[RMDB]
RNA sequence: GGGAACGACUCGAGUAGAGUCGAAAACAGAUGGACCAAGCACUGCAAGAACUUCAUUAUCGACCACGAGUGAGAGCGGUCCAAGUGUAAAAUCCUCAUAUGUCGUUGUGAUAUCGGUGAGUGUAAGAGUCAUGUCCAGGGAUUGUGCGCAAUGGUAACAUACCCGAACAUUCGUGUUCGGGUAUGUAAAAGAAACAACAACAACAAC
Reactivity to DMS in 0.01 (KOAc 150mM, MgCl2 10mM, bicine 150mM(pH8.5), 24C), signal-to-noise 3, nucleotides 027 to 156: c030a110g000a120u000g010g020a110c030c020a110a240g020c030a130c070u020g000c070a100a130g010a100a100c080u010u000c040a070u010u020a170u000c060g020a070c040c050a050c080g020a110g050u000g000a110g000a120g020c040g020g040u020c020c040a030a080g050u000g000u000a040a060a110a120u010c010c020u010c050a160u000a140u000g030u000c000g010u010u010g000u000g020a130u000a070u000c060g030g020u000g000a080g020u000g040u010a080a120g000a100g010u000c050a080u000g030u000c030c030a030g000g000g000a090u000u020g010u000g080c050g020c040a040a080u010g030g020u000a080
Reactivity to 2A3 in 0.01 (KOAc 150mM, MgCl2 10mM, bicine 150mM(pH8.5), 24C), signal-to-noise 4, nucleotides 027 to 156: c030a010g120a130u080g010g000a020c000c020a060a070g060c010a030c060u120g040c050a060a080g020a180a080c020u150u060c060a110u070u230a110u170c050g050a070c030c050a080c140g020a030g020u060g020a100g000a000g070c030g000g010u000c010c000a040a020g040u030g020u040a070a090a030a090u070c030c020u060c020a050u060a060u140g030u020c030g030u040u020g010u040g030a020u040a030u160c100g010g000u030g010a010g020u040g010u050a080a060g010a010g040u040c030a050u070g040u030c030c050a000g040g000g030a110u090u050g030u020g030c000g000c040a030a080u070g080g050u120a000
The record gives the reactivity of an RNA of 207 nucleotides to DMS and 2A3.
The RNA was probed in 150 mM KOAc, 10 mM MgCl2 and 150 mM bicine (pH 8.5) at 24 C.
It was measured as part of the RMDB library OK3TST.
2A3 adducts were read by reverse transcription with SuperScript II with manganese.
For DMS, 5,833 sequencing reads were counted.
DMS adducts were read by reverse transcription with MarathonRT.